[RMDB]
RNA sequence: GGGAACGACUCGAGUAGAGUCGAAAAUUGAAGAAAGUAGUUUAGACUUCAACCCUUUGAUGUCCACAGUUAGUACGCUUGGGGAAGUAUAAUACAUGCUGAGGUCAACAGAUAUUUCCUGAACACUAUAUUACAUGGAGGAAUGGGUAGCAGCAAGAGAUGUGAUUCAUUUCGAUGAAUCACAUCUAAAAGAAACAACAACAACAAC
Reactivity to 2A3 in 0.01 (KOAc 150mM, MgCl2 10mM, bicine 150mM(pH8.5), 24C), signal-to-noise 4, nucleotides 027 to 156: u040u010g030a010a020g020a050a110a020g050u160a050g020u070u130u190a070g050a050c010u020u010c020a050a080c010c010c000u060u040u080g080a100u060g030u020c030c010a040c000a040g020u090u090a030g040u090a010c040g010c040u020u070g000g000g010g030a030a000g030u030a050u030a190a080u100a020c060a060u120g030c010u040g020a030g020g050u070c040a030a020c020a040g070a040u080a070u070u050u010c000c010u020g040a050a000c050a000c060u070a050u030a040u220u170a080c080a070u080g030g020a040g010g030a070a040u060g030g050g000u020a010g000c030a010g010c020a030a060g020
Reactivity to DMS in 0.01 (KOAc 150mM, MgCl2 10mM, bicine 150mM(pH8.5), 24C), signal-to-noise 2, nucleotides 027 to 156: u000u000g010a070a100g000a130a140a110g040u010a120g020u000u000u000a150g000a130c010u000u000c020a050a100c050c000c020u000u010u020g020a080u000g020u000c040c050a060c060a110g020u000u000a080g030u000a060c080g020c060u000u000g000g020g050g010a030a070g000u000a070u000a040a070u000a070c100a060u000g020c030u020g010a110g010g010u010c010a080a070c050a050g000a130u000a090u000u000u000c020c010u000g010a060a060c070a060c040u000a020u000a080u010u000a050c050a060u010g030g000a090g020g000a100a090u010g040g010g040u000a060g000c030a080g030c050a080a140g010
Conditions: 150 mM KOAc, 10 mM MgCl2 and 150 mM bicine (pH 8.5), 24 C. Chemical mapping of a 207-nucleotide RNA with 2A3 and DMS. DMS adducts were read by reverse transcription with MarathonRT. The DMS profile rests on 4,237 reads.